[RMDB]
RNA sequence: GGGAACGACUCGAGUAGAGUCGAAAACAACUGUUAUCUAGCCACUGCAUUGUUAACACUCCAACAAAUAGAGUUGAAGUUUAAUCCACCUGCUCUACAAAGGGCUGGUGAAGCUGCUAACUUUUGUAAACGUUGUCGUUCGCGACAACGAAAAGAAACAACAACAACAAC
Reactivity to DMS in 0.01 (KOAc 150mM, MgCl2 10mM, bicine 150mM(pH8.5), 24C), signal-to-noise 3, nucleotides 027 to 129: c000a040a020c020u010g040u050u010a040u000c000u050a190g030c030c130a120c000u040g020c210a110u020u030g040u050u010a070a100c180a080c030u050c040c050a050a050c060a050a090a190u070a120g050a000g020u020u040g000a000a000g020u000u000u000a080a060u070c000c000a040c020c030u000g000c000u020c020u030a110c300a020a020a010g010g000g060c010u020g070g030u020g000a050a040g050c030u010g000c090u010a030a030c030u000u000u000u000g040u030a020a030a240
Reactivity to 2A3 in 0.01 (KOAc 150mM, MgCl2 10mM, bicine 150mM(pH8.5), 24C), signal-to-noise 7, nucleotides 027 to 129: c010a000a000c010u020g030u050u020a040u070c090u120a000g020c030c040a040c030u030g000c020a050u110u050g030u040u070a060a030c040a010c070u000c010c020a020a030c020a050a260a100u280a050g180a020g020u010u020g030a020a010g010u030u040u080a030a030u040c010c000a000c010c000u020g010c010u000c000u060a150c090a070a200a100g000g000g000c000u010g000g000u000g000a000a000g000c000u010g000c020u010a010a010c000u040u030u030u050g060u070a060a050a090